[RMDB]
RNA sequence: GGGAACGACUCGAGUAGAGUCGAAAAUACCAACAGAUACUCGCCAUCUGAGGUAGAUAGAAUUCUAUAGGGCGAACAAAAAGAGAGUUGCAAAGUAGCAACGCUAAACGACAAAAAUAACGGUCCAAACGAUACAAACAGUAGCAUAACGUCAUAAAUGCAUUUAAUUAUUCGUAAUUAAAUGCAUAAAAGAAACAACAACAACAAC
Reactivity to DMS in 0.01 (KOAc 150mM, MgCl2 10mM, bicine 150mM(pH8.5), 24C), signal-to-noise 3, nucleotides 027 to 156: u000a130c020c000a100a300c060a060g000a090u000a070c070u010c030g020c030c030a210u000c050u060g000a300g040g010u000a030g020a090u000a110g010a100a120u000u000c050u000a060u010a090g030g010g010c000g000a040a160c050a070a080a080a110a110g010a070g010a060g010u000u010g000c010a050a040a240g060u000a110g010c020a010a030c020g000c010u000a030a060a100c060g010a130c040a010a070a070a080a100u000a070a080c040g010g010u000c020c030a020a070a100c060g000a080u000a070c030a050a060a040c050a100g010u000a040g000c050a080u000a040a080c040g030u000c020a070u010a050a130
Reactivity to 2A3 in 0.01 (KOAc 150mM, MgCl2 10mM, bicine 150mM(pH8.5), 24C), signal-to-noise 6, nucleotides 027 to 156: u090a010c010c010a020a070c000a020g040a020u070a100c020u020c030g010c010c010a040u010c030u040g060a070g050g060u020a010g000a020u090a040g150a080a140u170u050c070u070a090u100a090g070g010g020c020g010a050a020c070a020a100a030a030a000g130a000g000a010g020u000u010g000c010a060a130a170g070u060a080g030c010a010a010c010g000c010u100a110a060a040c070g080a020c060a030a090a030a030a020u100a080a070c060g020g020u030c030c000a070a070a010c050g030a050u060a130c060a010a120a010c020a040g050u070a000g030c030a020u080a090a030c000g050u060c040a020u140a180a150